[RMDB]
RNA sequence: GGGAACGACUCGAGUAGAGUCGAAAAGCGGUAUUGGGGUGAACCAUUCCCGAUCGUCUAUGACAGCGACGGGCGUCCGCAUGCGCUCGACGAAGCUGCACUGCCCGUCGAGCUGCCUGAUGUCCCGACGCCUUGCAUCUUUCGAGAUGCAAGGCGUAAAAGAAACAACAACAACAAC
Reactivity to DMS in 0.01 (KOAc 150mM, MgCl2 10mM, bicine 150mM(pH8.5), 24C), signal-to-noise 2, nucleotides 027 to 126: g000c040g000g010u000a030u000u000g000g010g000g020u030g000a170a120c130c030a170u040u010c000c000c010g000a110u000c010g010u030c010u010a110u030g000a150c190a050g000c040g010a040c000g000g000g010c250g010u000c070c140g030c020a080u060g000c010g000c020u000c050g000a040c070g030a040a300g000c000u030g000c220a040c190u020g030c080c010c030g010u000c010g020a030g000c000u010g000c000c080u040g000a130u020g000u000c000c000c020g010
Reactivity to 2A3 in 0.01 (KOAc 150mM, MgCl2 10mM, bicine 150mM(pH8.5), 24C), signal-to-noise 3, nucleotides 027 to 126: g050c050g000g030u110a130u070u140g040g060g040g010u120g140a110a090c020c020a020u050u070c000c030c000g030a230u040c000g100u000c050u120a190u220g050a110c020a020g040c000g020a020c010g000g000g020c020g020u050c040c040g040c080a010u210g010c010g010c050u020c010g110a110c000g040a090a020g030c050u080g130c090a070c210u090g020c000c000c000g000u020c030g010a010g000c060u100g000c010c010u090g020a030u050g070u130c000c000c000g000

An RNA of 177 nucleotides, treated with DMS and 2A3 and read out base by base. The 2A3 profile rests on 1,414 reads. Source: RMDB library OK1LIB, as collected in RNAgym. For DMS, 2,816 sequencing reads were counted. 2A3 adducts were read by reverse transcription with SuperScript II with manganese.